[RMDB]
Structure probing data (DMS) for a 177-nucleotide construct. The DMS profile rests on 1,647 reads. The RNA was probed in 150 mM KOAc, 10 mM MgCl2 and 150 mM bicine (pH 8.5) at 24 C.
RNA sequence: GGGAACGACUCGAGUAGAGUCGAAAAGAUAUGGAUAGGGACGUUGCAUUGGUCGUCGAUAAGAAUCAUAUCGGAAACGAUAUAUUCUUUUGACGACGCUACAAUGCAACGUCCCUAUCCUAAGUCACAACUAAGUCACGUUCGCGUGACUUAGUUGAAAAGAAACAACAACAACAAC
Reactivity to DMS in 0.01 (KOAc 150mM, MgCl2 10mM, bicine 150mM(pH8.5), 24C), signal-to-noise 1, nucleotides 027 to 126: g000a030u000a300u010g020g000a000u030a010g000g000g000a030c000g020u000u000g000c010a000u000u000g010g010u000c000g000u020c000g000a020u020a020a010g020a030a000u010c300a010u000a000u000c010g000g000a110a050a290c000g020a000u000a010u000a030u020u000c000u000u000u000u000g010a050c010g010a050c000g000c260u040a300c030a020a020u000g000c030a000a000c000g020u000c020c010c000u000a000u000c000c000u000a000a040g010u020c080a160